An RNA of 207 nucleotides, treated with 2A3 and read out base by base. 2A3 adducts were read by reverse transcription with SuperScript II with manganese. Values cover nucleotides 27 to 156. The reactions ran in a buffer of 150 mM KOAc, 10 mM MgCl2 and 150 mM bicine (pH 8.5), at 24 C.
RNA sequence: GGGAACGACUCGAGUAGAGUCGAAAAGAUCUGCCGGGGAGAGCGGCUUUCCUCAUCGAUUCGGGAGCACCCACCAUGCUUAAUUUCUUUAUUAAUUCUAGUAGUUUUAAACUACAUGCUUUAGAAACGUACACAUAAACAAUCAUUUUACCUGCAAGAGUAAUUAUGCUUUCGAGCAUAAUUACUCAAAAGAAACAACAACAACAAC
Reactivity to 2A3 in 0.01 (KOAc 150mM, MgCl2 10mM, bicine 150mM(pH8.5), 24C), signal-to-noise 3, nucleotides 027 to 156: g020a080u070c010u070g010c020c000g000g000g030g040a060g010a020g050c050g000g000c000u000u010u000c030c000u090c020a100u040c040g080a080u030u100c030g010g020g010a060g040c040a040c000c000c010a010c020c030a060u030g010c030u040u040a110a100u170u140u140c030u090u180u120a240u160u150a220a190u150u110c030u070a080g000u000a020g000u000u040u060u270a110a130a000c000u000a000c000a000u110g040c010u090u190u090a070g030a030a090a010c050g060u140a030c060a000c010a030u150a110a100a010c040a130a090u160c030a030u170u160u120u110a080c020c030u130g100c050a090a030
2A3 is a SHAPE reagent: it acylates the 2'-hydroxyl of flexible nucleotides of all four kinds.